This 177-nucleotide RNA was probed chemically with DMS and 2A3. 2A3 is a SHAPE reagent: it acylates the 2'-hydroxyl of flexible nucleotides of all four kinds. 2A3 adducts were read by reverse transcription with SuperScript II with manganese.
RNA sequence: GGGAACGACUCGAGUAGAGUCGAAAAUCAGCACUUUUCUUUCAUUGGGGGAAGGUGUGAGGAAAGUAACAAACAGCAGCGGAGUUUUAAACUUUAAAUAGACAGGUCUGAGUGCCUGAAUUUGCCUUCAUACUCUUUAGUUCGCUAAAGAGUAUGAAAAAGAAACAACAACAACAAC
Reactivity to DMS in 0.01 (KOAc 150mM, MgCl2 10mM, bicine 150mM(pH8.5), 24C), signal-to-noise 2, nucleotides 027 to 126: u000c070a230g000c060a040c010u000u000u000u000c030u000u000u020c040a110u000u000g020g010g040g020g000a070a050g000g010u000g000u000g000a100g010g000a020a040a040g000u010a050a100c090a060a100a050c050a060g000c050a020g030c060g000g000a050g020u010u000u000u010a060a100a090c040u010u010u010a030a060a080u010a110g000a190c020a020g000g010u000c050u020g010a090g040u000g000c030c020u010g000a030a050u000u000u000g000c110c040u000
Reactivity to 2A3 in 0.01 (KOAc 150mM, MgCl2 10mM, bicine 150mM(pH8.5), 24C), signal-to-noise 3, nucleotides 027 to 126: u080c010a000g050c030a020c010u080u050u050u050c020u030u210u150c050a180u180u300g090g000g000g000g010a010a030g000g000u000g020u030g010a030g030g070a040a050a000g050u050a040a000c030a050a100a000c020a050g060c000a000g030c030g090g060a030g040u060u040u070u170a060a040a010c000u070u090u120a050a050a030u050a050g090a080c000a000g000g040u040c050u180g190a050g090u260g020c000c000u000g010a010a030u040u050u090g030c000c000u000